[RMDB]
RNA sequence: GGGAACGACUCGAGUAGAGUCGAAAAUUGUCAUGUUUCGACAUGACAAACAUAAGAUCUAGACAAAAACGGCCAAAAUGUCUAGAUCAAAUAAAGGCCGAAGACUAGGUUAGUUCGCUAACCUAAAUGAAAGACAACUAUUCGUAGUUGUCUUUCAAAAAGAAACAACAACAACAAC
Reactivity to DMS in 0.01 (KOAc 150mM, MgCl2 10mM, bicine 150mM(pH8.5), 24C), signal-to-noise 3, nucleotides 027 to 126: u010u000g000u000c000a010u000g000u000u000u020c150g030a040c000a000u010g010a010c010a020a020a100c200a070u020a100a140g000a030u000c000u000a000g000a010c000a050a080a090a070a130c030g020g000c030c010a070a060a090a080u000g010u000c000u010a000g000a000u000c010a040a060a070u020a030a100a090g010g010c000c000g000a110a090g010a120c200u000a000g000g010u000u000a000g010u000u010c180g020c010u000a000a000c000c000u000a000a060a070
Reactivity to 2A3 in 0.01 (KOAc 150mM, MgCl2 10mM, bicine 150mM(pH8.5), 24C), signal-to-noise 2, nucleotides 027 to 126: u020u000g000u000c000a010u000g010u010u080u070c130g050a000c010a000u000g010a000c000a000a030a000c030a050u220a100a060g000a000u000c010u000a010g010a010c020a020a240a020a040a080c030g010g000c010c020a020a110a040a110u050g000u000c000u000a000g000a000u000c000a000a010a000u030a010a010a000g000g000c010c000g020a060a010g080a040c100u020a000g000g010u000u010a010g000u030u030c140g010c090u000a000a000c000c010u000a030a010a010
The record gives the reactivity of an RNA of 177 nucleotides to DMS and 2A3. For 2A3 the reverse transcriptase was SuperScript II with manganese. For 2A3, 4,390 sequencing reads were counted. The reactions ran in a buffer of 150 mM KOAc, 10 mM MgCl2 and 150 mM bicine (pH 8.5), at 24 C.